[RMDB]
RNA sequence: GGGAACGACUCGAGUAGAGUCGAAAAUUAUGGUGCGUCUCGAAAUUACCGGUGAAGUCGAUCCGCAUACCGGUUGGAUUAUGGAUUUCGCGGAUCUCAAAGCGGCGUUUAAACCGACUUACGAUCGCUCACCGCAUUACUUCGGUAAUGCGGUGAGAAAAGAAACAACAACAACAAC
Reactivity to 2A3 in 0.01 (KOAc 150mM, MgCl2 10mM, bicine 150mM(pH8.5), 24C), signal-to-noise 1, nucleotides 027 to 126: u300u220a170u100g000g000u050g040c050g000u030c040u000c040g000a000a030a000u230u000a010c050c000g000g000u050g030a020a020g060u220c010g000a050u050c060c010g000c010a070u090a240c000c000g100g000u120u000g180g000a000u240u000a220u150g080g000a090u000u000u230c080g000c010g000g000a000u000c000u030c090a130a200a000g000c000g040g000c060g010u090u000u110a080a090a010c000c000g030a020c000u020u040a000c050g010a030u160c030g050